[RMDB]
An RNA of 177 nucleotides, treated with 2A3 and read out base by base. The reactions ran in a buffer of 150 mM KOAc, 10 mM MgCl2 and 150 mM bicine (pH 8.5), at 24 C. The data come from the RNA Mapping Database (RMDB), library OK1LIB.
RNA sequence: GGGAACGACUCGAGUAGAGUCGAAAACGUAUCAGCUUUAAUUUCGCACUUAAAUUUUGACACUUUUUUGCGUGCUCGUUGGCUGCCCGAAACUCUGCGAACUUUUGUUUCUGUUCGCCCUCGAGGACCCUGAUACCCACUUCGGUGGGUAUCAGGGAAAAGAAACAACAACAACAAC
Reactivity to 2A3 in 0.01 (KOAc 150mM, MgCl2 10mM, bicine 150mM(pH8.5), 24C), signal-to-noise 3, nucleotides 027 to 126: c060g060u090a070u120c030a020g080c020u070u020u140a080a070u120u150u200c090g000c020a040c040u050u180a050a040a070u250u150u040u120g170a080c070a080c070u020u040u030u070u200u140g000c020g000u000g010c040u010c080g020u030u040g020g000c020u020g010c040c000c000g060a030a030a010c060u080c040u030g010c030g040a030a020c000u080u130u050u030g010u000u020u000c010u000g000u010u000c010g000c000c020c000u050c070g010a080g150g000a080